This 177-nucleotide RNA was probed chemically with DMS. DMS adducts were read by reverse transcription with MarathonRT.
[RMDB]
RNA sequence: GGGAACGACUCGAGUAGAGUCGAAAACACCGCCUGCCGAAGUCCCGGCUUGUCAACGUCCCCUAGCACGACUCUGGCUCCGCGGCGGGCGAACUCGGUGCCGGUAGCCAACCCGAUGCCACUGGCAUGAGGACGAUCUAUUCGUAGAUCGUCCUCAAAAAGAAACAACAACAACAAC
Reactivity to DMS in 0.01 (KOAc 150mM, MgCl2 10mM, bicine 150mM(pH8.5), 24C), signal-to-noise 2, nucleotides 027 to 126: c090a100c140c100g030c050c020u020g010c010c020g000a110a120g010u010c050c020c040g000g030c160u000u000g040u000c030a110a150c070g010u000c000c010c000c030u000a100g000c110a080c160g010a040c040u010c050u000g020g010c000u000c050c230g000c000g020g000c050g000g000g020c040g000a040a040c020u000c080g030g000u000g010c010c000g010g020u000a060g020c020c160a050a170c060c040c040g020a050u010g000c030c030a050c030u000g010g010c030a070

Values cover nucleotides 27 to 126. The reactions ran in a buffer of 150 mM KOAc, 10 mM MgCl2 and 150 mM bicine (pH 8.5), at 24 C.